[RMDB]
RNA sequence: GGGAACGACUCGAGUAGAGUCGAAAACAGCCAGCGUCACCAGGGCGUCGUCGCCCGAGAGGUGGAAUACGAGCAUGAAGGGCACCAGCUGUUUGCCGUGGCGUCCGUGCCAGGUGUACGUUUCCACGUCGUAAGUGACGAACAGGCGACGCACGGACCUACUCUCUAUUUUCGAAUAGAGAGUAGGAAAAGAAACAACAACAACAAC
Reactivity to 2A3 in 0.01 (KOAc 150mM, MgCl2 10mM, bicine 150mM(pH8.5), 24C), signal-to-noise 9, nucleotides 027 to 156: c030a010g050c020c000a020g000c000g000u010c000a020c050c030a070g060g090g050c100g080u170c060g070u080c020g020c000c000c060g100a020g000a010g020g010u000g020g050a010a050u300a050c020g020a030g060c010a010u070g120a160a150g030g010g000c020a000c020c030a040g040c030u060g050u150u130u200g050c030c030g060u070g060g010c010g020u020c030c040g000u050g010c000c030a130g090g000u020g020u040a070c010g000u000u010u000c000c010a020c020g230u000c000g020u060a040a050g000u010g020a000c000g000a040a040c020a030g010g000c010g000a010c000g010c010a030c030g010g010a020
Reactivity to DMS in 0.01 (KOAc 150mM, MgCl2 10mM, bicine 150mM(pH8.5), 24C), signal-to-noise 4, nucleotides 027 to 156: c030a100g030c020c010a140g000c040g000u010c020a050c010c030a300g000g010g000c020g060u000c160g030u010c040g030c000c010c020g010a070g010a060g010g050u000g000g020a060a050u000a070c020g020a300g000c000a060u010g000a120a090g010g010g000c000a010c010c010a080g020c020u020g010u000u010u000g010c030c060g000u000g030g060c010g030u010c020c030g000u000g000c020c050a130g000g020u000g010u000a100c060g020u000u000u000c010c000a050c020g010u000c010g000u010a070a150g020u000g010a050c010g010a080a080c090a180g000g010c020g000a050c040g000c010a140c040g000g000a250